[RMDB]
An RNA of 177 nucleotides, treated with DMS and read out base by base.
The RNA was probed in 150 mM KOAc, 10 mM MgCl2 and 150 mM bicine (pH 8.5) at 24 C.
The data come from the RNA Mapping Database (RMDB), library OK2TST.
DMS adducts were read by reverse transcription with MarathonRT.
RNA sequence: GGGAACGACUCGAGUAGAGUCGAAAAGUGUCCACCGCGAUCGGGGCGGCCCUAGCUUAUGAGGGGGCUCACGAGCGCACCGGCAGCCCGGACUCCCCGCCCCGCACCAUCGCACUGAUCGGCGACCCUGCGGAAUGUGAUUCGUCACAUUCCGCAGAAAAGAAACAACAACAACAAC
Reactivity to DMS in 0.01 (KOAc 150mM, MgCl2 10mM, bicine 150mM(pH8.5), 24C), signal-to-noise 1, nucleotides 027 to 126: g010u050g040u000c090c090a160c190c050g020c010g030a010u000c130g020g020g000g060c100g000g000c070c000c030u000a170g000c150u010u050a180u010g000a120g030g050g030g010g060c070u000c070a130c070g010a020g010c050g040c090a070c140c080g000g000c090a110g010c010c030c040g000g010a070c070u010c050c030c000c060g020c040c000c000c070g010c230a050c040c030a040u000c010g010c030a060c130u000g020a070u020c100g030g030c050g030a080c050c050